[RMDB]
RNA sequence: GGGAACGACUCGAGUAGAGUCGAAAAGAUAUGGAAGGUGGGAGGAACUACAGUGCUGCUCGGAAACGAGCAGGGCUGCCGAAGAACACCUUCCUAAGUCAAAGGCAAGGUGUUCGCACCUUGCCAAGAUUUAUGUUCGCUUCGGCGAACAUAAAUCAAAAGAAACAACAACAACAAC
Reactivity to DMS in 0.01 (KOAc 150mM, MgCl2 10mM, bicine 150mM(pH8.5), 24C), signal-to-noise 1, nucleotides 027 to 126: g000a040u000a300u000g000g000a030a010g020g010u000g000g020g000a170g010g030a150a050c120u010a270c000a010g040u000g010c000u000g030c010u000c000g000g000a070a080a110c010g000a000g000c010a000g000g010g000c000u000g050c040c070g000a090a130g000a300a230c010a010c000c030u010u000c030c000u000a010a070g010u010c010a020a120a080g000g000c000a000a000g000g010u020g020u000u030c250g000c020a020c000c010u000u000g000c000c000a020a030
Reactivity to 2A3 in 0.01 (KOAc 150mM, MgCl2 10mM, bicine 150mM(pH8.5), 24C), signal-to-noise 1, nucleotides 027 to 126: g010a000u060a020u080g000g000a030a030g030g020u030g010g010g010a080g050g020a110a040c150u220a080c300a020g000u060g300c010u010g000c000u010c000g000g000a060a040a030c000g000a010g020c000a000g000g020g010c020u040g000c050c050g180a270a050g010a060a000c010a000c000c010u000u020c000c000u010a010a010g000u000c030a120a060a080g000g010c010a000a000g000g000u000g030u130u140c300g010c110a000c000c000u030u000g040c000c000a000a010
Structure probing data (DMS and 2A3) for a 177-nucleotide construct. High 2A3 reactivity points to a flexible backbone, as in loops and unpaired stretches. It was measured as part of the RMDB library TTRDEL. Conditions: 150 mM KOAc, 10 mM MgCl2 and 150 mM bicine (pH 8.5), 24 C.